This 177-nucleotide RNA was probed chemically with DMS and 2A3. It was measured as part of the RMDB library OK1LIB.
[RMDB]
RNA sequence: GGGAACGACUCGAGUAGAGUCGAAAAGAAAUGUCCGAUGCUGUUAGGCCCGUUUAAGCAUCACAGCCGUUUUGACCGAAUUUUUUUCGGACGGGCCAAAUGCGAGUCGGCGGCUGGAGGACUAGAAGGGCUGCACGUUGUUCGCAGUGUGUAGCCCAAAAGAAACAACAACAACAAC
Reactivity to DMS in 0.01 (KOAc 150mM, MgCl2 10mM, bicine 150mM(pH8.5), 24C), signal-to-noise 8, nucleotides 027 to 126: g010a060a080a070u030g000u000c010c010g000a070u010g010c010u000g010u010u010a080g000g000c000c000c000g000u000u010u040a110a070g000c000a020u010c080a180c070a060g000c020c030g000u000u010u020u020g010a100c000c010g000a020a000u000u010u020u020u030u020u000c040g000g000a050c010g000g000g010c030c010a010a040a030u020g000c080g000a060g010u000c010g000g000c000g000g000c000u000g000g020a170g000g000a030c020u010a090g010a130a140
Reactivity to 2A3 in 0.01 (KOAc 150mM, MgCl2 10mM, bicine 150mM(pH8.5), 24C), signal-to-noise 9, nucleotides 027 to 126: g080a010a120a020u160g000u010c000c010g010a010u040g010c010u020g030u160u120a090g000g010c000c000c000g010u020u050u080a060a010g020c000a010u060c050a010c010a030g030c010c020g030u040u060u160u250g050a040c010c010g020a020a020u100u080u080u020u010u070u130c040g020g010a020c000g020g000g000c000c000a020a030a010u160g020c040g030a040g030u020c010g010g010c000g000g000c000u010g030g060a060g020g010a020c010u020a020g080a120a120